This 207-nucleotide RNA was probed chemically with 2A3. For 2A3 the reverse transcriptase was SuperScript II with manganese.

RNA sequence: GGGAACGACUCGAGUAGAGUCGAAAAACCGCACCUGGCUUGCCCGUUCCAAGUCGAGAGUGGGUUCAUGUUUCCUGAGCGAAGGCUCGGGUGAUGUGAGCUUUAGAAUCGGGGGGCAAUGCGUUAGGCUGGUUUCACAGAGCUGCGAAAACCUCUAGAUGCAUAUGCACUUCGGUGCAUAUGCAUCAAAAGAAACAACAACAACAAC
Reactivity to 2A3 in 0.01 (KOAc 150mM, MgCl2 10mM, bicine 150mM(pH8.5), 24C), signal-to-noise 1, nucleotides 027 to 156: a020c000c000g000c000a030c000c000u020g040g020c010u000u000g000c000c000c000g080u150u110c070c010a100a050g030u040c040g190a030g010a000g070u100g000g000g010u010u000c010a010u020g010u000u060u010c010c000u000g000a000g000c010g080a150a030g200g000c000u000c000g060g000g000u000g000a000u000g000u000g000a000g010c000u150u100u240a060g020a070a050u080c070g000g000g000g000g020g030c000a000a030u190g000c000g050u100u070a060g030g000c020u030g050g020u000u170u100c070a070c040a030g050a030g010c100u070g080c030g040a050a070a110a240c000c000u070c030u060a030